[RMDB]
RNA sequence: GGGAACGACUCGAGUAGAGUCGAAAAGGUGAAACCUCGUCUCUGCUAAAAAUACAAAAAUUAGCCGGGCGUGGUGGUGCAUGCCUGUAAUCCCAGCUACUCAGGAGGCUGAGGCAGGAGAAUCUCGGGAGGCAGAGGUUGCAGUGAGCCGAGAUAAAGUACGGUAGUAUUUCGAUACUACCGUACUAAAAGAAACAACAACAACAAC
Reactivity to DMS in 0.01 (KOAc 150mM, MgCl2 10mM, bicine 150mM(pH8.5), 24C), signal-to-noise 2, nucleotides 027 to 156: g040g030u000g020a070a120a090c020c010u000c010g030u010c000u010c020u000g020c000u040a020a060a050a040a140u010a300c100a090a070a100a070a220u000u000a030g030c000c260g020g000g020c030g080u010g000g030u000g000g020u000g000c080a090u000g020c000c010u010g010u010a050a080u000c000c010c010a050g040c050u000a050c020u010c020a050g020g000a150g030g020c040u010g010a020g030g010c020a020g000g000a090g000a040a030u000c020u000c040g000g000g020a100g010g020c050a080g000a100g000g000u000u000g000c000a140g050u000g010a100g030c000c010g010a040g020a050u010a050a120
Reactivity to 2A3 in 0.01 (KOAc 150mM, MgCl2 10mM, bicine 150mM(pH8.5), 24C), signal-to-noise 2, nucleotides 027 to 156: g010g000u040g020a100a010a010c000c000u020c010g040u030c110u010c000u090g020c000u030a010a020a050a080a100u200a110c110a060a130a050a110a080u030u020a000g000c000c030g020g000g010c010g010u030g000g000u040g000g010u060g040c070a020u170g040c000c030u050g050u150a070a060u060c000c000c000a000g010c010u120a080c000u010c070a040g010g040a100g160g000c020u030g020a020g000g010c000a000g000g130a070g050a100a080u040c020u020c060g000g000g000a010g080g000c040a010g030a050g130g030u100u050g010c020a000g020u040g070a020g080c000c010g010a010g020a030u110a080a160

Structure probing data (DMS and 2A3) for a 207-nucleotide construct. For 2A3, 1,139 sequencing reads were counted. The RNA was probed in 150 mM KOAc, 10 mM MgCl2 and 150 mM bicine (pH 8.5) at 24 C. Source: RMDB library OK3TST, as collected in RNAgym. Reactivities are given for positions 27 through 156.